[RMDB]
RNA sequence: GGGAACGACUCGAGUAGAGUCGAAAAGGAGAAAGUUCACACUCAGGUAACAUGAAGUGGAAUUUGGCCUCAUUUCAGGUUGCCCAACUAGUAACACAGGAUAACUGGUAAGGUUUAGAAAAUGAAGUAGGGACAGGGGAGAUUUUCUAAACUUUACUGGGCUACAAGUGUUCGCACUUGUAGCCCAAAAAGAAACAACAACAACAAC
Reactivity to 2A3 in 0.01 (KOAc 150mM, MgCl2 10mM, bicine 150mM(pH8.5), 24C), signal-to-noise 2, nucleotides 027 to 156: g070g010a020g070a010a080a010g030u110u100c030a020c000a000c120u070c030a030g070g010u050a110a020c030a080u040g040a080a010g020u000g010g110a070a050u130u040u130g070g030c000c000u030c050a020u000u040u080c020a000g010g010u000u020g020c020c020c010a060a060c030u060a030g090u140a120a020c080a010c030a070g060g030a100u100a170a000c020u040g000g010u000a020a000g030g000u040u010u000a000g020a000a010a000a030u060g060a210a030g040u120a070g040g030g050a040c040a040g040g020g020g010a080g000a010u020u000u000u000c000u000a010a010a010c000u000u000u000a000c010